[RMDB]
RNA sequence: GGGAACGACUCGAGUAGAGUCGAAAAGUGUUAGCGUUCGCGCUAACACAAAGAACGCUGCAACGCGCUGCGCGCUCGCGAGAGCACGAAAGAGCGUUAUAAAAAGCUCGGGCUUCGGCCCGAGCAAGAUGUAUCAUUGCUUCGGCAAUGAUACAUCAAAAGAAACAACAACAACAAC
Reactivity to DMS in 0.01 (KOAc 150mM, MgCl2 10mM, bicine 150mM(pH8.5), 24C), signal-to-noise 2, nucleotides 027 to 126: g020u000g000u000u000a020g040c000g010u000u010c260g020c020g020c000u000a010a000c020a000c000a030a070a120g000a160a130c130g020c130u000g000c080a050a030c000g010c010g000c010u000g000c000g020c000g000c020u000c020g000c280g000a220g000a000g030c010a020c000g010a040a090a020g010a040g020c020g020u000u010a120u030a040a160a070a160a050g000c000u000c030g020g000g000c000u030u020c200g020g020c000c000c000g000a000g000c020a000a000
Reactivity to 2A3 in 0.01 (KOAc 150mM, MgCl2 10mM, bicine 150mM(pH8.5), 24C), signal-to-noise 2, nucleotides 027 to 126: g020u000g000u000u010a000g020c010g020u030u030c240g030c010g000c140u000a010a000c010a000c020a000a010a000g020a060a010c050g030c130u120g020c060a050a020c030g000c020g000c030u040g020c020g010c000g030c010u030c020g000c030g000a070g000a010g150c010a010c020g030a230a230a030g020a020g010c000g000u000u060a160u120a100a190a000a020a020g000c000u000c000g000g000g000c000u060u090c290g120g000c030c010c030g000a000g010c000a000a000
The record gives the reactivity of an RNA of 177 nucleotides to DMS and 2A3. The RNA was probed in 150 mM KOAc, 10 mM MgCl2 and 150 mM bicine (pH 8.5) at 24 C. It was measured as part of the RMDB library M2PK50. High 2A3 reactivity points to a flexible backbone, as in loops and unpaired stretches.